This 177-nucleotide RNA was probed chemically with DMS and 2A3. For DMS, 1,001 sequencing reads were counted. The 2A3 profile rests on 760 reads. The data come from the RNA Mapping Database (RMDB), library OK2TST. Conditions: 150 mM KOAc, 10 mM MgCl2 and 150 mM bicine (pH 8.5), 24 C. For 2A3 the reverse transcriptase was SuperScript II with manganese. For DMS the reverse transcriptase was MarathonRT.
RNA sequence: GGGAACGACUCGAGUAGAGUCGAAAAUUUGUGAACCACAGAUUCACUCUUGUGGCGACGGUGACCAUCCACCAGGUUCCGAAGGGGAGCACUCCUCUGCUGGGUGCGGGUCUGGGGGACGGUCACACGCGUACUACCGCUUCGGCGGUAGUACGCGAAAAGAAACAACAACAACAAC
Reactivity to DMS in 0.01 (KOAc 150mM, MgCl2 10mM, bicine 150mM(pH8.5), 24C), signal-to-noise 2, nucleotides 027 to 126: u000u000u030g030u000g040a190a080c030c020a050c070a030g020a100u010u010c240a120c190u000c030u010u000g040u000g000g010c050g020a270c200g000g040u000g000a020c000c010a080u030c010c000a050c010c000a010g000g010u000u020c010c060g010a210a190g000g010g010g040a220g000c050a040c060u000c000c010u050c220u010g040c140u000g010g010g000u010g010c040g000g000g000u000c000u000g010g000g010g000g020a020c030g010g000u000c000a010c000a030
Reactivity to 2A3 in 0.01 (KOAc 150mM, MgCl2 10mM, bicine 150mM(pH8.5), 24C), signal-to-noise 1, nucleotides 027 to 126: u100u140u180g140u030g040a040a000c030c000a010c000a090g070a070u160u190c060a000c140u010c030u160u300g030u040g020g040c060g010a040c060g120g020u000g000a010c000c000a020u000c000c010a040c000c000a050g020g000u100u300c000c010g040a200a120g060g000g000g010a010g040c030a030c060u110c020c040u300c170u160g160c210u060g000g030g000u030g010c090g000g030g000u000c020u010g010g000g000g020g000a000c000g000g000u010c000a010c020a020